[RMDB]
The record gives the reactivity of an RNA of 177 nucleotides to 2A3 and DMS. The DMS profile rests on 17,823 reads. For 2A3, 34,475 sequencing reads were counted. Source: RMDB library OK1LIB, as collected in RNAgym. The reactions ran in a buffer of 150 mM KOAc, 10 mM MgCl2 and 150 mM bicine (pH 8.5), at 24 C.
RNA sequence: GGGAACGACUCGAGUAGAGUCGAAAAGAAGACGUGACGAAAAGUCACGUCAAUACAGAGACUACUCAACUCUGAAAAACACAACAAAAGUGUAAAAGGGUAGCAGGAUCGAGAGAUCCUGAAAAGACUCAUAUUUACGUUUCGACGUAAAUAUGAGAAAAGAAACAACAACAACAAC
Reactivity to 2A3 in 0.01 (KOAc 150mM, MgCl2 10mM, bicine 150mM(pH8.5), 24C), signal-to-noise 8, nucleotides 027 to 126: g150a090a030g000a000c000g000u000g010a000c010g070a130a150a070a100g000u000c000a000c000g000u000c000a000a000u040a000c000a000g010a000g020a050c000u000a000c000u010c020a120a030c010u000c010u010g030a050a010a010a030a000c070a020c050a200a070c060a060a150a070a070g020u020g010u050a020a040a010a010g020g000g000u000a000g000c000a000g000g000a000u000c010g010a000g010a010g000a150u000c000c000u000g000a000a000a000a000g040a000
Reactivity to DMS in 0.01 (KOAc 150mM, MgCl2 10mM, bicine 150mM(pH8.5), 24C), signal-to-noise 7, nucleotides 027 to 126: g010a230a170g000a020c000g020u000g010a000c000g000a090a090a110a190g000u000c000a010c000g000u000c000a050a070u040a140c030a000g000a010g010a150c010u000a020c000u000c010a120a060c000u000c000u000g000a060a050a080a110a040c010a000c010a080a100c210a090a130a140a090g010u000g010u000a010a020a040a300g000g010g000u000a010g000c020a000g000g000a010u000c000g010a240g000a220g000a010u000c000c000u010g000a030a050a110a080g010a190